Notes
Source: RMDB library M2RFPK, as collected in RNAgym. The record gives the reactivity of an RNA of 207 nucleotides to 2A3 and DMS. The reactions ran in a buffer of 150 mM KOAc, 10 mM MgCl2 and 150 mM bicine (pH 8.5), at 24 C. For 2A3, 1,570 sequencing reads were counted. High 2A3 reactivity points to a flexible backbone, as in loops and unpaired stretches. For DMS, 5,662 sequencing reads were counted. Reactivities are given for positions 27 through 156. For 2A3 the reverse transcriptase was SuperScript II with manganese.
[RMDB]
RNA sequence: GGGAACGACUCGAGUAGAGUCGAAAACGCACUCGCAGCUUAAUAACCUGCGCUGAGCCCUUCUCCCCCAGCUUGCCUGUGUCCUAGGGAAUUGGAAGGUCAUCCUUCACAGGAUCGUGUGGAACUCAUUACUCGUGAGUGUUCGCACUCACGAGAAUCCAUAUUUAUUCUUCGGAAUAAAUAUGGAAAAAGAAACAACAACAACAAC
Reactivity to 2A3 in 0.01 (KOAc 150mM, MgCl2 10mM, bicine 150mM(pH8.5), 24C), signal-to-noise 2, nucleotides 027 to 156: c050g000c000a050c030u030c000g020c000a000g030c020u060u030a010a030u050a040a070c010c000u000g050c020g020c290u050g010a040g030c010c030c030u110u070c090u070c010c000c000c010c000a020g000c010u020u110g050c000c000u020g010u010g020u080c010c060u080a080g000g000g040a050a090u120u080g040g000a060a020g020g030u050c020a080u080c000c000u000u080c020a020c010a050g030g020a060u100c070g010u080g000u020g040g050a060a050c000u020c100a070u050u210a100c000u000c010g000u000g000a010g000u000g000u010u030c060g000c050a000c000u000c000a000c010g000a000g000a000a020
Reactivity to DMS in 0.01 (KOAc 150mM, MgCl2 10mM, bicine 150mM(pH8.5), 24C), signal-to-noise 3, nucleotides 027 to 156: c040g010c020a070c030u010c020g020c030a040g010c040u000u000a150a150u000a190a130c220c000u000g010c010g030c150u010g000a090g040c030c020c010u000u000c030u000c050c020c000c000c040a080g040c060u010u010g030c020c020u010g010u010g010u000c070c010u010a120g020g010g030a070a130u010u000g010g000a070a050g040g010u000c080a120u030c040c010u000u000c070a120c050a090g030g010a070u000c090g030u010g030u000g000g010a100a130c050u000c020a130u010u000a120c020u000c050g000u020g010a040g030u000g040u010u010c230g020c010a020c000u010c010a030c000g000a020g030a050a110